[RMDB]
RNA sequence: GGGAACGACUCGAGUAGAGUCGAAAAACGCUUCCCAAUGUGCGGCAAAGAAACAUUGUUUAUGCAAAGGCACUUCGCAAUGUGUGCUCAAACAUUGCUUAUUCAAACACGCUUCACAAUGUGCGACAAAACUUCACGGUCUUCGGACCGUGAAGAAGCCAGUUAUAAACUUCGGUUUAUAACUGGCAAAAGAAACAACAACAACAAC
Reactivity to DMS in 0.01 (KOAc 150mM, MgCl2 10mM, bicine 150mM(pH8.5), 24C), signal-to-noise 1, nucleotides 027 to 156: a040c040g010c120u000u000c000c010c000a050a120u020g040u000g040c000g010g030c010a140a100a110g030a140a060a070c060a050u000u000g000u010u000u000a070u040g080c010a090a080a130g020g000c020a040c030u000u020c090g000c100a140a110u000g010u000g010u000g000c050u000c080a110a110a020c000a070u000u000g000c000u000u020a110u020u010c020a060a150a120c030a020c050g020c050u000u010c050a070c080a070a070u010g040u000g010c020g000a170c070a020a040a050a090c020u000u030c010a000c000g040g020u000c010u000u000c300g020g000a050c010c000g050u000g000a010a010g000a040a110
Reactivity to 2A3 in 0.01 (KOAc 150mM, MgCl2 10mM, bicine 150mM(pH8.5), 24C), signal-to-noise 5, nucleotides 027 to 156: a000c060g020c070u010u030c000c000c000a010a050u110g020u060g020c060g020g000c050a080a110a080g100a050a120a030c040a080u050u040g050u030u130u070a090u150g030c050a040a040a070g080g000c010a010c000u130u110c100g020c110a040a070u060g000u010g010u010g030c070u100c230a040a060a020c020a040u020u020g000c000u080u100a140u100u110c070a030a070a040c080a010c090g000c020u050u040c030a000c010a050a100u070g050u070g070c020g040a040c090a030a080a030a030c000u000u000c000a000c000g000g010u000c000u030u030c070g070g010a000c000c000g000u000g000a000a000g000a000a000
Conditions: 150 mM KOAc, 10 mM MgCl2 and 150 mM bicine (pH 8.5), 24 C.
An RNA of 207 nucleotides, treated with DMS and 2A3 and read out base by base.
Values cover nucleotides 27 to 156.
It was measured as part of the RMDB library M2RFPK.